[RMDB]
RNA sequence: GGGAACGACUCGAGUAGAGUCGAAAAGAUGAGUCUCAACACAACUGAAUGUGUUGUACAUGACGUACUGACUACGUUAUGUAUGGUGUAUUCAGUUAUACACCAAGACUCAUGGUAGUCAGUAUAAGGUAGUGCUAGAUUUCGAUCUGGCGCUACCAAAAGAAACAACAACAACAAC
Reactivity to 2A3 in 0.01 (KOAc 150mM, MgCl2 10mM, bicine 150mM(pH8.5), 24C), signal-to-noise 9, nucleotides 027 to 126: g060a010u010g000a000g000u000c000u000c000a010a000c000a000c000a050a140c160u300g150a250a230u080g030u000g000u000u000g000u000a000c000a000u010g010a000c010g010u040a100c000u000g000a000c000u000a000c010g010u020u020a000u000g000u000a000u000g000g000u000g000u000a010u030u140c060a040g070u120u070a000u000a000c000a000c000c000a000a000g000a000c000u000c000a000u000g020g010u010a000g000u000c000a000g030u020a100u040a100a030
Reactivity to DMS in 0.01 (KOAc 150mM, MgCl2 10mM, bicine 150mM(pH8.5), 24C), signal-to-noise 9, nucleotides 027 to 126: g000a010u000g000a010g000u000c000u000c010a010a010c010a000c010a040a170c280u050g020a160a130u010g010u000g010u000u000g010u000a000c000a000u000g000a010c010g010u000a080c010u000g000a010c010u000a040c000g000u000u000a000u000g000u000a000u000g010g000u000g000u000a000u000u020c300a190g020u050u020a010u000a000c000a010c000c000a000a000g000a010c000u000c000a010u000g000g020u000a010g010u000c000a000g010u020a110u030a120a140

Chemical mapping of a 177-nucleotide RNA with 2A3 and DMS. The 2A3 profile rests on 129,521 reads. Reactivities are given for positions 27 through 126. Source: RMDB library OK1LIB, as collected in RNAgym.